This 177-nucleotide RNA was probed chemically with DMS and 2A3. The DMS profile rests on 6,204 reads.
[RMDB]
RNA sequence: GGGAACGACUCGAGUAGAGUCGAAAAGCAUAGAAAGAGGUAGAAAAAGAGUGGAGGGCUCGUUAUGAAUUUUGGUAUGUUUGGCGCCGCGGCGGUGCUGGGGAUCUCUGCGGUGGGUUCUGCGCUCCACUAGCAUCCGUUUCGACGGAUGCUAGUGAAAAGAAACAACAACAACAAC
Reactivity to DMS in 0.01 (KOAc 150mM, MgCl2 10mM, bicine 150mM(pH8.5), 24C), signal-to-noise 3, nucleotides 027 to 126: g020c090a040u010a060g010a060a040a040g000a040g010g010u000a080g010a050a070a090a100a090g010a040g030u030g000g010a060g010g010g030c030u010c070g000u030u010a070u020g010a050a130u010u030u020u010g000g010u000a090u000g010u010u020u000g000g030c020g000c000c020g000c070g020g000c070g000g010u010g010c070u020g000g000g000g000a060u010c050u030c030u000g000c060g000g020u000g010g000g000u030u010c060u010g010c040g000c030u010c050
Reactivity to 2A3 in 0.01 (KOAc 150mM, MgCl2 10mM, bicine 150mM(pH8.5), 24C), signal-to-noise 3, nucleotides 027 to 126: g010c000a100u120a070g090a030a090a010g070a060g040g070u170a030g140a070a090a020a020a000g050a030g010u080g000g100a070g040g000g020c010u000c020g060u090u120a120u170g130a170a060u060u060u060u120g050g010u060a060u120g090u030u080u060g050g030c020g000c000c000g000c030g040g010c030g000g030u060g030c070u080g000g010g010g030a010u020c040u000c030u040g040c010g000g000u120g010g000g000u070u000c020u050g060c030g000c030u040c000
The RNA was probed in 150 mM KOAc, 10 mM MgCl2 and 150 mM bicine (pH 8.5) at 24 C. Values cover nucleotides 27 to 126. The 2A3 profile rests on 1,398 reads.